[RMDB]
Chemical mapping of a 177-nucleotide RNA with DMS and 2A3. For 2A3 the reverse transcriptase was SuperScript II with manganese. The RNA was probed in 150 mM KOAc, 10 mM MgCl2 and 150 mM bicine (pH 8.5) at 24 C. The 2A3 profile rests on 77,212 reads.
RNA sequence: GGGAACGACUCGAGUAGAGUCGAAAAGCUCUGCGAGGCAGAUCGAACAACAAAGAGAGAUCGAAAAUCUUAGAGGAGAGAACGAAUCUGUCGACUUCACUAGGACAUUGUCGAUCAGAGGUCCAAAGACCAUUCUUUGGUUCGCCGAAGGAUGGUCAAAAGAAACAACAACAACAAC
Reactivity to DMS in 0.01 (KOAc 150mM, MgCl2 10mM, bicine 150mM(pH8.5), 24C), signal-to-noise 9, nucleotides 027 to 126: g010c030u000c010u000g020c060g010a190g000g010c040a060g000a040u000c010g000a210a190c070a060a090c240a080a120a100g010a060g000a290g000a030u000c020g000a050a060a120a190u000c000u000u000a010g010a070g010g000a010g000a110g000a140a030c020g000a100a110u040c130u040g000u000c000g000a290c000u000u010c010a090c020u000a010g000g000a030c140a100u020u020g010u000c010g000a090u000c010a050g000a040g000g010u000c020c030a060a090a080
Reactivity to 2A3 in 0.01 (KOAc 150mM, MgCl2 10mM, bicine 150mM(pH8.5), 24C), signal-to-noise 9, nucleotides 027 to 126: g020c000u000c000u010g020c030g040a050g030g000c020a010g010a040u010c010g040a050a040c020a050a030c030a020a290a010g100a010g010a000g000a020u020c020g040a030a040a020a060u010c010u020u020a010g010a030g030g010a010g010a010g030a070a040c030g030a070a150u150c100u170g080u050c030g050a110c000u020u010c010a010c040u020a010g000g020a010c030a140u070u130g040u030c000g000a010u040c010a000g020a010g030g040u010c010c010a040a030a020